[RMDB]
RNA sequence: GGGAACGACUCGAGUAGAGUCGAAAAAGUCACCUAUUACGAUAGGUGACAUUUGAACCAGCGAACAAUUCACUUGCGAGAUUCGAGGUUUCAGUCUGAAUCAUAGUAGCCAUUACGAUGGCUACAACUCACUCCCGACUGUUCGCAGUCGGGAGAACCAAUAUUAUUCGUUCGCGAAUAAUAUUGGAAAAGAAACAACAACAACAAC
Reactivity to 2A3 in 0.01 (KOAc 150mM, MgCl2 10mM, bicine 150mM(pH8.5), 24C), signal-to-noise 8, nucleotides 027 to 156: a000g000u000c000a000c000c000u010a010u030u070a060c240g030a010u000a000g000g000u000g000a000c000a000u050u030u050g010a020a010c020c010a030g120c010g060a050a020c040a130a140u180u130c060a070c140u060u140g030c050g040a040g050a120u030u020c010g050a050g050g000u050u090u140c030a040g070u010c050u150g090a060a050u100c050a070u110a150g000u000a000g000c000c010a010u050u060a060c260g100a020u010g000g000c000u000a000c000a000a010c020u070c040a080c010u000c000c000c000g000a000c000u010g040u050u060c210g000c120a000g000u000c000g000g000g000a000g000a000a000
Reactivity to DMS in 0.01 (KOAc 150mM, MgCl2 10mM, bicine 150mM(pH8.5), 24C), signal-to-noise 2, nucleotides 027 to 156: a140g000u010c000a010c010c000u000a050u000u020a080c250g060a070u000a020g000g010u010g020a010c000a000u000u010u000g010a080a260c030c000a110g000c090g010a110a080c050a090a110u000u000c060a110c100u000u000g000c070g000a160g010a100u010u000c020g010a150g040g000u000u000u000c070a100g030u000c030u010g000a060a130u000c030a100u000a110g010u000a010g030c040c010a050u000u000a140c260g020a140u000g000g010c000u010a000c000a030a040c060u000c040a130c000u010c010c000c000g010a020c000u000g000u010u010c240g030c030a030g010u000c000g000g000g010a000g010a010a030